An RNA of 177 nucleotides, treated with DMS and 2A3 and read out base by base. DMS adducts were read by reverse transcription with MarathonRT. The RNA was probed in 150 mM KOAc, 10 mM MgCl2 and 150 mM bicine (pH 8.5) at 24 C. It was measured as part of the RMDB library OK1LIB. The DMS profile rests on 1,712 reads. For 2A3, 1,374 sequencing reads were counted.

RNA sequence: GGGAACGACUCGAGUAGAGUCGAAAACUCUGGUGAGACCCUAUCUAGUAUAGCAAUCCACCAAGCAGGUGAGUUCACACAAUUCAGGUUCUCAGAGAAAAUGCGCCCUGACUUGACAGGUAUGGUCCGUACGGAUGCCAUUCGUGGCAUCCGUACGAAAAGAAACAACAACAACAAC
Reactivity to DMS in 0.01 (KOAc 150mM, MgCl2 10mM, bicine 150mM(pH8.5), 24C), signal-to-noise 2, nucleotides 027 to 126: c010u020c000u040g030g040u020g000a060g060a090c100c300c040u000a040u010c020u020a150g070u040a040u060a060g010c130a080a010u010c030c000a000c020c000a040a160g000c170a160g020g040u010g000a080g030u000u000c060a040c160a170c100a060a050u010u070c140a020g000g000u000u000c000u020c020a070g030a140g040a050a060a080a050u010g000c100g050c300c010c000u010g000a090c070u020u000g010a030c050a010g000g030u030a000u050g040g040u000c020
Reactivity to 2A3 in 0.01 (KOAc 150mM, MgCl2 10mM, bicine 150mM(pH8.5), 24C), signal-to-noise 2, nucleotides 027 to 126: c010u000c040u070g080g060u050g050a140g000a000c000c030c000u000a040u010c000u010a130g070u070a070u080a100g070c030a060a020u000c010c010a030c000c000a040a100g070c130a060g020g020u030g020a080g040u060u070c000a010c000a000c040a180a110u110u090c040a060g000g040u120u000c040u000c000a020g020a000g120a080a140a020a000u050g030c040g000c010c000c000u040g040a030c000u040u080g010a030c040a000g030g030u080a010u060g070g000u000c030